Background: Source: RMDB library OK3TST, as collected in RNAgym. An RNA of 207 nucleotides, treated with 2A3 and read out base by base. The RNA was probed in 150 mM KOAc, 10 mM MgCl2 and 150 mM bicine (pH 8.5) at 24 C. For 2A3, 477 sequencing reads were counted.
RNA sequence: GGGAACGACUCGAGUAGAGUCGAAAAUCGAGUCUAACUCAAAAGAGUGGAACUAUUGUGUUGGACUACACAAUGAGAUAAACCUUUGUGACGAUCCUGAAAUCGUUCUUGAGAAACUGUUAGCUCUUAUUGCAUUCUUCUUGUCCAAACAUAACACAAAACAGGGUCUGUUCGCAGACCCUGUUUUAAAAGAAACAACAACAACAAC
Reactivity to 2A3 in 0.01 (KOAc 150mM, MgCl2 10mM, bicine 150mM(pH8.5), 24C), signal-to-noise 1, nucleotides 027 to 156: u020c000g000a000g100u000c000u030a080a070c040u110c070a050a050a000a050g150a020g050u090g100g030a030a050c000u030a090u040u070g030u000g000u070u060g010g040a030c030u090a000c060a000c000a020a040u100g070a030g030a090u230a080a150a070c000c000u090u020u030g140u060g030a020c000g010a040u000c010c080u110g060a020a020a020u030c000g010u130u000c000u050u030g060a090g090a010a040a010c060u090g060u080u030a070g000c000u000c000u080u140a130u070u070g040c040a060u050u000c000u090u040c000u040u040g000u010c040c000a100a000a000c020a060u230a130a050c070a040c070